RNA sequence: GGGAACGACUCGAGUAGAGUCGAAAAGGUCUACGUGAUGACGAGUCAGGUCAGGCUCCGCACUGGGUUUGGUCGCCCAGGGGAUGGAGACACGGAAAGGACAUCGUGUGCUAUAAGUCUGACGUAACUAUCUAAUCCAGUUCGCUGGAUUAGAUAGAAAAGAAACAACAACAACAAC
Reactivity to 2A3 in 0.01 (KOAc 150mM, MgCl2 10mM, bicine 150mM(pH8.5), 24C), signal-to-noise 4, nucleotides 027 to 126: g060g010u000c010u030a040c030g070u110g100a110u110g060a070c030g010a020g020u040c030a010g000g100u010c010a010g010g000c010u000c020c010g020c010a050c030u000g000g000g030u020u060u120g100g000u060c040g000c000c000c000a000g010g020g050g000a070u110g010g030a030g010a030c010a010c010g030g110a090a090a090g150g010a020c020a050u070c030g030u020g020u040g100c030u080a060u040a300a040g020u000c010u010g010a000c010g010u010a040a050
Reactivity to DMS in 0.01 (KOAc 150mM, MgCl2 10mM, bicine 150mM(pH8.5), 24C), signal-to-noise 7, nucleotides 027 to 126: g010g010u000c010u010a040c050g010u000g020a150u000g010a130c040g000a100g000u010c040a110g010g010u010c030a040g010g010c000u000c010c030g000c050a100c010u000g010g000g010u000u000u000g010g010u000c240g000c000c000c010a020g000g000g020g010a120u000g010g010a060g000a130c020a020c010g000g000a070a080a120g020g010a100c140a070u010c030g010u000g010u000g010c050u010a110u010a140a070g000u000c010u000g010a040c030g010u010a080a170